[RMDB]
RNA sequence: GGGAACGACUCGAGUAGAGUCGAAAAAUCAUCUGAAGAUCAGCUAUUAGAAGAGAAAGAUCAGUUAAGUCCUUUGGACCUGAUCAGCUUGAUACAAGAACUGCUGAUUUCAACUUCUUUGGCUUAAAAAAGGCCACAGAGUUCGCUCUGUGGCCAACAAAAGAUGAAUCUUCGGAUUCAUCUUUUGAAAAGAAACAACAACAACAAC
Reactivity to 2A3 in 0.01 (KOAc 150mM, MgCl2 10mM, bicine 150mM(pH8.5), 24C), signal-to-noise 3, nucleotides 027 to 156: a000u030c030a040u030c040u110g070a100a040g030a140u060c020a000g000c020u050a090u190u100a130g020a060a010g030a010g050a090a080a000g030a000u000c000a000g010u080u170a180a020g000u020c000c010u070u120u280g040g000a020c010c030u060g010a030u030c010a020g030c010u050u060g030a030u100a260c040a040a070g040a120a070c030u060g000c000u010g020a050u010u030u050c020a030a050c010u030u010c000u010u070u000g070g000c000u040u070a040a070a010a060a110a120g010g000c020c020a000c020a000g020a010g020u020u110c120g040c070u010c000u000g000u000g010g010c010c000a000a000
Reactivity to DMS in 0.01 (KOAc 150mM, MgCl2 10mM, bicine 150mM(pH8.5), 24C), signal-to-noise 1, nucleotides 027 to 156: a160u000c030a080u000c080u010g010a160a200g020a140u000c090a090g010c010u010a100u010u000a030g010a070a070g000a080g010a180a200a060g000a010u000c000a020g010u010u010a090a090g010u010c010c000u000u000u000g050g010a070c020c040u010g000a200u010c110a140g010c120u000u010g020a130u000a050c020a030a050g010a010a040c030u000g020c000u000g000a020u000u000u000c010a090a290c010u000u000c010u010u000u010g020g000c010u000u000a000a030a040a130a080a180g020g000c030c000a010c000a000g000a050g050u010u000c300g000c000u000c000u000g030u010g000g050c030c000a000a020